[RMDB]
RNA sequence: GGGAACGACUCGAGUAGAGUCGAAAAACUUAUUCUGUCUCACCAAGGGGCUGCUAUUUCCUUUUUCAAAGUAUCUCUUGAGAUUGCCUGUUCUUUCCAUUCCUAACUGAGUCCACAUCCUGUUUACUUCAUGCCUAAUACAGCAACAGCUCCUUGAGCAGGAUCAUACUUUCGAGUAUGAUCCUGCAAAAGAAACAACAACAACAAC
Reactivity to 2A3 in 0.01 (KOAc 150mM, MgCl2 10mM, bicine 150mM(pH8.5), 24C), signal-to-noise 2, nucleotides 027 to 156: a010c130u220u100a130u220u060c070u050g070u010c020u020c060a020c030c020a050a070g040g000g020g010c030u020g040c010u070a110u060u100u140c020c000u100u020u010u040u140c110a060a050a000g020u040a060u040c050u030c000u080u120g050a070g010a160u090u060g060c000c000u020g040u010u080c000u060u060u000c040c010a050u030u090c000c000u060a100a110c050u030g020a000g030u020c010c020a050c000a030u030c020c010u030g010u090u090u060a050c000u050u100c010a030u060g020c010c010u040a100a050u090a090c010a040g030c020a030a030c000a000g000c000u000c000c000u040u060g000a010

This 207-nucleotide RNA was probed chemically with 2A3.
Conditions: 150 mM KOAc, 10 mM MgCl2 and 150 mM bicine (pH 8.5), 24 C.
Values cover nucleotides 27 to 156.
The 2A3 profile rests on 909 reads.
It was measured as part of the RMDB library OK3TST.